[RMDB]
RNA sequence: GGGAACGACUCGAGUAGAGUCGAAAAGAUAUGGACCAACAGUUCUUUUGACGGUCUACAUUCGGAAACGAAUGGUCAGACCGAUAAGAACGUUGGUCCUAAGUCAAAAGGACACUUCGGUGUCCAAUCCUCUAAUAAGGUUCGCCUUAUUAGAGGAAAAAGAAACAACAACAACAAC
Reactivity to DMS in 0.01 (KOAc 150mM, MgCl2 10mM, bicine 150mM(pH8.5), 24C), signal-to-noise 9, nucleotides 027 to 126: g000a020u000a300u000g000g010a010c000c000a010a010c000a140g030u000u000c000u000u000u010u020g020a250c120g010g000u000c000u000a070c000a010u000u000c000g000g010a090a070a150c010g000a010a000u000g000g010u020c220a020g010a010c000c000g010a080u000a020a010g000a010a010c010g020u000u000g000g000u000c000c000u000a000a060g000u010c030a090a070a140a180g010g000a020c000a000c000u000u010c240g030g010u000g010u010c000c000a060a050
Reactivity to 2A3 in 0.01 (KOAc 150mM, MgCl2 10mM, bicine 150mM(pH8.5), 24C), signal-to-noise 9, nucleotides 027 to 126: g010a000u050a020u110g010g000a000c000c010a000a010c050a110g020u010u000c030u070u250u270u300g300a210c140g000g000u000c010u000a010c000a000u000u010c000g020g000a020a030a030c000g000a010a010u020g020g050u130c030a000g010a000c000c020g060a070u130a160a000g000a000a000c000g000u000u000g000g000u000c000c000u000a000a000g000u000c000a010a010a030a150g000g000a010c000a000c020u070u220c300g140g000u010g000u000c010c000a000a010